[RMDB]
RNA sequence: GGGAACGACUCGAGUAGAGUCGAAAAACGGUGGCAUGAUACGUCAUGCCACCGAACAGCUCCCCUCGUCCAACCAGCUGCCACGUCCUGUAACCAAAAGUGACCGGGAUGAAUGCCUGGCUCCCAAACGGAGUACGGCUUUCGAGCCGUACUCCGUAAAAGAAACAACAACAACAAC
Reactivity to 2A3 in 0.01 (KOAc 150mM, MgCl2 10mM, bicine 150mM(pH8.5), 24C), signal-to-noise 1, nucleotides 027 to 126: a000c030g000g000u000g000g010c010a000u000g000a020u030a060c230g070u000c000a000u000g010c020c000a020c000c030g000a000a000c000a020g020c050u000c000c000c000c020u080c010g040u010c060c000a010a010c010c020a020g000c030u000g020c000c010a040c010g050u050c060c010u080g050u070a080a060c000c000a010a030a000a000g080u060g060a140c250c060g000g010g000a050u050g150a200a040u180g010c000c060u000g000g020c030u000c000c000c000a070a070
An RNA of 177 nucleotides, treated with 2A3 and read out base by base. 2A3 adducts were read by reverse transcription with SuperScript II with manganese. For 2A3, 596 sequencing reads were counted. Source: RMDB library RFM100, as collected in RNAgym. Values cover nucleotides 27 to 126.